[RMDB]
RNA sequence: GGGAACGACUCGAGUAGAGUCGAAAAGAAAGAAGAAAGCCAGUAAAAAGAAGCUGGCAAAGAAAAGAAAUCGUGUCCAAAAGAAACUAUUGAAGUGGGAACGAAACUACAAUAGGCUAGAAAGAAAGAUAGUCAUUUAUUUCGAUAAAUGACUAUCAAAAGAAACAACAACAACAAC
Reactivity to DMS in 0.01 (KOAc 150mM, MgCl2 10mM, bicine 150mM(pH8.5), 24C), signal-to-noise 2, nucleotides 027 to 126: g010a060a080a140g040a200a160g000a170a130a140g030c020c010a000g000u000a060a050a170a190a220g010a280a300g000c000u000g020g000c030a000a010a140g000a150a090a110a090g010a130a190a060u010c070g040u010g000u030c020c030a080a080a060a080g020a080a050a110c020u000a010u000u010g010a090a030g010u000g010g020g030a130a100c240g000a090a080a030c010u000a040c020a000a030u000a020g000g000c090u010a070g030a160a110a070g000a080a090a100
Reactivity to 2A3 in 0.01 (KOAc 150mM, MgCl2 10mM, bicine 150mM(pH8.5), 24C), signal-to-noise 2, nucleotides 027 to 126: g010a030a080a000g140a030a040g090a120a070a000g000c000c010a010g000u060a080a110a230a150a120g110a110a080g010c000u000g000g000c010a000a060a000g000a000a010a000a000g030a010a080a000u120c020g010u040g110u070c020c020a000a030a050a060g050a050a110a060c030u070a040u060u050g040a040a000g020u110g010g060g000a180a000c050g070a200a010a020c030u070a010c030a020a000u000a040g030g000c030u100a070g100a090a110a000g090a000a010a000